[RMDB]
RNA sequence: GGGAACGACUCGAGUAGAGUCGAAAACAGUGAUGGAAACAUCACUGAAAAACCGGAAACGGACAUGACGAUCGCGCGCAUGUCGGGAAACCGUAAAUGCGAAAAGAGCUAGCGAAAGCUAGCUCAACCAGCUACGAGUGUUCGCACUCGUAGCUGGAAAAGAAACAACAACAACAAC
Reactivity to 2A3 in 0.01 (KOAc 150mM, MgCl2 10mM, bicine 150mM(pH8.5), 24C), signal-to-noise 2, nucleotides 027 to 126: c010a000g000u000g010a000u000g010g000a010a000a000c000a000u000c000a050c000u000g010a020a000a000a030a000c000c000g090g000a080a120a000c020g040g030a000c010a000u050g040a020c050g060a130u030c040g030c000g000c000g000c090a040u060g000u000c040g020g000g050a070a060a000c000c000g010u090a030a070a120u180g040c030g040a020a090a080a100g000a000g000c000u000a000g000c030g040a130a050a000g000c000u000a000g000c000u000c000a000a000